RNA sequence: GGGAACGACUCGAGUAGAGUCGAAAACAGUUAUGUGCGUCCCUCCCGAAGCUGCGCGCUCGGUCGAAGAGGACGACCAUCGCCGAUAGAGGACCACCGGUCUUCGGUCAAGGGAAUAAGAGUAAAAAUACGUCGAUGAGUUCGCUCAUCGACGUAUAAAAGAAACAACAACAACAAC
Reactivity to DMS in 0.01 (KOAc 150mM, MgCl2 10mM, bicine 150mM(pH8.5), 24C), signal-to-noise 1, nucleotides 027 to 126: c040a120g040u000u020a020u020g010u010g030c040g020u000c000c010c040u000c010c000c010g000a030a050g040c020u000g000c200g040c110g030c030u000c020g030g000u010c160g000a050a040g010a180g020g010a040c010g000a040c030c010a020u000c050g020c030c040g000a060u000a120g010a030g000g010a040c010c040a090c140c070g010g000u010c010u010u000c030g010g020u000c060a040a070g010g010g020a110a120u020a050a050g000a120g000u040a010a070a040a100
An RNA of 177 nucleotides, treated with DMS and read out base by base. Values cover nucleotides 27 to 126. For DMS the reverse transcriptase was MarathonRT. The DMS profile rests on 768 reads.